[RMDB]
RNA sequence: GGGAACGACUCGAGUAGAGUCGAAAACAUCAAGAGAAAGGGGAUAGGAAAAUGGGUUAAUGAAACAGUCCAAGGGGAGCAAUGUGGACAAAAAGAAUCUCCUGUCCUGGUCUGGGCAGUCUUUUAACGAACCACAAGGAAGAGUCUUUGAUGUGGAGCGUAGCGUAGCAUUCGUGCUACGCUACGCAAAAGAAACAACAACAACAAC
Reactivity to 2A3 in 0.01 (KOAc 150mM, MgCl2 10mM, bicine 150mM(pH8.5), 24C), signal-to-noise 2, nucleotides 027 to 156: c020a060u080c030a070a020g020a020g040a130a020a050g020g010g000g050a060u140a090g050g050a050a080a050a050u040g020g000g000u030u050a070a070u140g110a050a120a020c040a020g050u040c020c020a030a040g000g000g010g000a060g020c050a030a140u150g050u020g040g070a070c090a000a140a000a040a040g080a050a020u040c030u030c060c020u010g030u030c000c000u110g050g150u080c150u050g010g000g010c000a000g000u040c020u030u050u010u060a090a030c060g010a010a030c030c010a020c020a030a000g030g010a060a070g010a020g040u000c060u050u130u080g020a070u040g020u040g010g040a030
An RNA of 207 nucleotides, treated with 2A3 and read out base by base.
For 2A3 the reverse transcriptase was SuperScript II with manganese.
Values cover nucleotides 27 to 156.
The RNA was probed in 150 mM KOAc, 10 mM MgCl2 and 150 mM bicine (pH 8.5) at 24 C.